[RMDB]
RNA sequence: GGGAACGACUCGAGUAGAGUCGAAAAGAUAUGGAAGACCAUGGGAGAUGUUCGGAAACGAAUACAUCGAAGAACAUGUCUUCCUAAGUCAAACUCGCGAUGAAGCGUUCGCGCUUCAUCGCGAGAAGAUAAUGCCUACGUUCGCGUAGGCAUUAUCAAAAGAAACAACAACAACAAC
Reactivity to DMS in 0.01 (KOAc 150mM, MgCl2 10mM, bicine 150mM(pH8.5), 24C), signal-to-noise 2, nucleotides 027 to 126: g000a030u000a300u000g010g020a040a010g000a030c200c140a030u010g000g020g000a230g000a010u020g020u010u000c000g000g010a100a110a200c000g010a020a050u020a040c050a000u000c020g030a110a090g020a140a150c000a010u000g010u000c010u000u000c010c010u010a020a050g010u020c030a060a060a190c020u000c000g020c000g000a010u010g000a020a000g010c020g010u010u010c190g000c000g020c000u020u010c000a000u000c000g000c000g020a000g020a010a030
Reactivity to 2A3 in 0.01 (KOAc 150mM, MgCl2 10mM, bicine 150mM(pH8.5), 24C), signal-to-noise 2, nucleotides 027 to 126: g010a020u110a040u140g020g000a000a010g020a030c090c180a080u010g040g010g000a080g000a000u030g020u040u030c020g000g050a060a070a090c010g020a060a020u200a210c010a000u010c030g130a290a030g000a030a010c000a000u010g000u000c000u000u010c000c000u010a120a020g050u030c030a030a010a080c000u000c010g000c020g000a020u030g000a000a030g020c040g060u100u140c300g020c010g030c050u030u000c010a010u000c000g030c020g000a000g000a010a010
The record gives the reactivity of an RNA of 177 nucleotides to DMS and 2A3.
The RNA was probed in 150 mM KOAc, 10 mM MgCl2 and 150 mM bicine (pH 8.5) at 24 C.
For DMS the reverse transcriptase was MarathonRT.
Values are in units of 0.01, from 0 to 300, in steps of 10.